RNA sequence: GGGAACGACUCGAGUAGAGUCGAAAACAUGUUGGCGGCUUUUGCCUUGAGGAUCGCCGUGCGGAGUCGGGGAUUGGCCUCAGGAUCUCCACCUCCUGUCCGAGCUGCUACCGAGAUCUCCUUGAUGCACCAUUUACAAAUUCGUUUGUAAAUGGUGAAAAGAAACAACAACAACAAC
Reactivity to DMS in 0.01 (KOAc 150mM, MgCl2 10mM, bicine 150mM(pH8.5), 24C), signal-to-noise 9, nucleotides 027 to 126: c080a070u000g010u010u000g010g010c050g010g000c070u010u000u000u010g010c050c040u000u000g010a090g010g010a080u000c060g010c020c030g020u000g020c090g010g010a090g020u000c080g010g010g000g000a110u010u000g010g010c050c040u000c050a060g000g000a050u000c030u000c020c020a110c060c020u000c010c010u000g010u010c070c040g010a100g010c030u000g010c020u000a050c030c020g000a080g010a140u000c030u000c010c020u000u010g020a140u010g000
Reactivity to 2A3 in 0.01 (KOAc 150mM, MgCl2 10mM, bicine 150mM(pH8.5), 24C), signal-to-noise 7, nucleotides 027 to 126: c030a040u170g040u090u120g120g000c050g000g030c030u050u100u190u260g100c020c000u050u100g060a080g040g030a080u070c030g000c060c030g030u070g020c060g040g050a050g040u070c030g010g010g010g030a030u040u090g100g030c000c020u040c020a020g040g030a020u020c020u010c020c010a030c010c000u010c000c000u030g030u010c020c010g010a030g010c010u050g010c010u030a060c010c020g050a050g020a210u020c020u020c020c020u040u100g060a080u140g050